[RMDB]
RNA sequence: GGGAACGACUCGAGUAGAGUCGAAAAGGGUCUAAGGCUGUUAAAGAGGCUCUCGAGACUAGUCUAUGACUUGGCCGGGCUAGAGCCUAACCCGUACCAGCCAUACGUAGGCGACUACGCUUUUGCGCGCCAUAGUAACAUUCGUGUUACUAUGGCGAAAAGAAACAACAACAACAAC
Reactivity to DMS in 0.01 (KOAc 150mM, MgCl2 10mM, bicine 150mM(pH8.5), 24C), signal-to-noise 6, nucleotides 027 to 126: g010g010g010u000c090u000a110a070g010g020c000u010g010u010u010a040a110a140g000a110g010g000c020u000c030u000c070g010a210g010a040c020u000a020g000u000c010u010a170u020g000a020c040u010u010g030g010c070c010g000g020g000c090u010a050g000a050g020c010c010u000a070a040c010c010c020g010u010a140c120c020a070g000c040c070a110u010a060c030g010u000a030g010g000c280g010a160c040u000a020c010g020c110u000u000u000u010g010c150g010
Reactivity to 2A3 in 0.01 (KOAc 150mM, MgCl2 10mM, bicine 150mM(pH8.5), 24C), signal-to-noise 4, nucleotides 027 to 126: g030g000g000u090c090u150a110a040g010g000c020u030g050u230u110a150a090a000g180a060g080g000c010u020c010u040c080g190a170g010a110c020u020a010g020u000c090u140a180u300g010a040c000u050u070g020g000c020c000g000g020g000c030u060a040g000a020g100c000c000u010a030a020c030c000c000g000u010a050c000c010a000g000c000c010a080u070a120c050g020u030a040g020g000c030g050a040c040u080a030c040g050c070u140u120u100u160g110c110g010